RNA sequence: GGGAACGACUCGAGUAGAGUCGAAAAGAUAUGGACCGCCGUCGGACAAUGAUGUGUGGUCGGAAACGACCACAUUGAGUCCAACGGUCGGUCCUAAGUCAAAGGCUAUUUGUUCGCAAAUAGCCAACUACCUCAAGUGGUUCGCCACUUGAGGUAGAAAAGAAACAACAACAACAAC
Reactivity to 2A3 in 0.01 (KOAc 150mM, MgCl2 10mM, bicine 150mM(pH8.5), 24C), signal-to-noise 2, nucleotides 027 to 126: g030a030u110a060u140g000g010a000c020c010g040c000c010g010u020c060g020g030a010c040a130a300u200g020a070u060g060u000g020u010g020g000u000c010g000g000a020a040a010c020g000a000c000c010a010c000a000u010u010g000a000g020u000c000c000a000a000c010g000g040u060c010g000g000u000c010c000u000a040a010g000u000c040a150a100a050g000g000c010u000a020u010u040u000g090u040u170c300g000c150a000a000a000u010a000g000c020c000a010a000
Reactivity to DMS in 0.01 (KOAc 150mM, MgCl2 10mM, bicine 150mM(pH8.5), 24C), signal-to-noise 3, nucleotides 027 to 126: g010a050u000a300u010g010g000a010c010c010g020c000c010g020u010c080g020g030a010c010a170a190u020g020a080u000g010u000g030u010g000g020u000c000g010g000a130a120a200c010g030a030c000c000a000c000a000u000u000g010a100g000u000c000c000a020a000c010g000g030u000c040g040g020u000c000c000u000a010a060g000u000c030a140a090a240g000g000c000u000a000u000u000u000g000u000u010c250g010c020a000a000a000u000a000g000c000c000a040a050

Structure probing data (2A3 and DMS) for a 177-nucleotide construct. 2A3 adducts were read by reverse transcription with SuperScript II with manganese. The RNA was probed in 150 mM KOAc, 10 mM MgCl2 and 150 mM bicine (pH 8.5) at 24 C. Reactivities are rounded to 0.1 and cut off at 0 and 3. DMS adducts were read by reverse transcription with MarathonRT. Values cover nucleotides 27 to 126.